[RMDB]
RNA sequence: GGGAACGACUCGAGUAGAGUCGAAAAGUAAUAGAUAACUGGAUGCAGCGUAGGCGUCAACGCAUAUCCAGUACGAAUGGUACCUGUAAAUAAAAUAUGGCGCCUUGUACAAGUACCAACAGAAGGAUAAGCGAUGGUGAUGUCAAUCACAUUUGCAGUAGCACCAUAGGUUCGCCUAUGGUGCUACAAAAGAAACAACAACAACAAC
Reactivity to 2A3 in 0.01 (KOAc 150mM, MgCl2 10mM, bicine 150mM(pH8.5), 24C), signal-to-noise 1, nucleotides 027 to 156: g010u010a060a130u070a180g120a070u110a230a000c000u000g020g000a000u040g030c210a280g000c160g000u000a000g010g010c000g000u000c020a000a000c000g070c000a000u000a030u140c000c000a000g010u000a000c020g130a130a110u080g000g000u000a000c010c010u000g020u000a000a030a190u120a060a030a170a000u210a120u010g000g000c050g000c000c000u000u120g000u000a000c000a010a010g000u000a000c000c000a000a040c050a080g100a090a010g040g070a040u130a230a010g000c010g060a050u120g020g220u020g000a050u090g080u300c100a110a000u020c000a030c000a000u100u100u270g000c020a000
An RNA of 207 nucleotides, treated with 2A3 and read out base by base. For 2A3, 451 sequencing reads were counted.